[RMDB]
Structure probing data (2A3 and DMS) for a 207-nucleotide construct. Values cover nucleotides 27 to 156. For 2A3, 2,474 sequencing reads were counted. It was measured as part of the RMDB library OK3TST.
RNA sequence: GGGAACGACUCGAGUAGAGUCGAAAAGGGCUGCUGCAAUUGGUGUUACACUGGGUCACACCCCAAGCCCACUGCUAUGGACAUCAGAAUAGCACCAGGGCUUGCCCAAGGACUGCAGUCACUGUGUCCUGACUGCCACUCAGAUUUAUUUGGGCCCACCAAUGGUCUAGUUCGCUAGACCAUUGGUAAAAGAAACAACAACAACAAC
Reactivity to 2A3 in 0.01 (KOAc 150mM, MgCl2 10mM, bicine 150mM(pH8.5), 24C), signal-to-noise 3, nucleotides 027 to 156: g010g010g000c010u040g000c030u010g040c050a040a220u070u060g030g010u030g050u070u110a070c160a030c140u100g040g000g030u080c040a030c010a060c050c000c010c000a000a010g000c000c000c010a000c020u020g000c000u020a000u060g100g070a090c020a200u160c040a110g110a190a020u040a020g000c010a010c020c110a100g000g010g000c050u010u020g010c020c000c010a020a020g020g020a020c040u040g010c010a010g020u020c020a050c120u070g050u010g040u070c000c000u030g040a040c010u040g040c030c020a020c020u080c010a080g040a200u050u110u150a110u060u150u080g020g020g000c000c020c000
Reactivity to DMS in 0.01 (KOAc 150mM, MgCl2 10mM, bicine 150mM(pH8.5), 24C), signal-to-noise 3, nucleotides 027 to 156: g020g040g030c010u010g040c040u030g040c040a040a100u010u000g010g020u010g020u010u000a110c090a070c060u000g010g060g050u000c070a090c080a230c010c010c030c040a090a130g010c010c000c000a090c080u000g020c010u000a050u000g000g010a190c130a130u000c100a150g000a110a070u000a040g010c000a030c040c100a280g040g010g020c020u000u000g030c010c020c020a090a110g010g000a090c080u000g030c000a050g050u010c020a050c020u000g000u000g010u010c050c030u020g010a030c010u000g000c020c100a060c050u000c040a070g020a160u000u000u000a150u030u000u000g020g000g030c030c030c020